[RMDB]
RNA sequence: GGGAACGACUCGAGUAGAGUCGAAAAGAUAUGGAGCAUACUCGUCUUGGAUUUAUUAGCGAACGUCCAUAUGUCGGAAACGACAUAUGGACCAGUAGCUAAUUGUCAGACGAGUGCUCCUAAGUCACAACAGGAAUGGGUUCGCCCAUUCCUGUUGAAAAGAAACAACAACAACAAC
Reactivity to 2A3 in 0.01 (KOAc 150mM, MgCl2 10mM, bicine 150mM(pH8.5), 24C), signal-to-noise 1, nucleotides 027 to 126: g060a000u150a040u230g000g000a020g000c030a050u160a300c000u010c000g110u060c070u190u300g240g040a050u300u300u220a000u070u070a030g000c000g020a050a000c020g000u100c000c000a000u000a040u010g040u000c000g050g060a070a070a090c050g000a000c000a030u020a000u020g020g000a000c000c010a060g030u000a000g080c000u000a000a000u000u000g010u010c030a000g010a000c000g010a000g000u000g020c010u000c000c000u000a000a000g020u020c000a020
Reactivity to DMS in 0.01 (KOAc 150mM, MgCl2 10mM, bicine 150mM(pH8.5), 24C), signal-to-noise 1, nucleotides 027 to 126: g000a070u010a300u010g000g000a030g020c000a070u000a110c000u000c000g050u020c000u000u000g040g020a040u000u020u000a020u000u000a010g030c040g010a240a130c300g010u000c000c000a000u000a020u010g000u000c010g000g000a200a120a190c000g020a000c000a000u010a000u010g000g000a000c000c000a000g000u000a110g000c000u010a000a000u000u000g000u000c010a010g010a000c020g040a010g010u000g000c000u000c000c000u000a010a080g000u010c060a170
Conditions: 150 mM KOAc, 10 mM MgCl2 and 150 mM bicine (pH 8.5), 24 C. This 177-nucleotide RNA was probed chemically with 2A3 and DMS. For DMS, 1,114 sequencing reads were counted. The data come from the RNA Mapping Database (RMDB), library TTRINS. Reactivities are given for positions 27 through 126.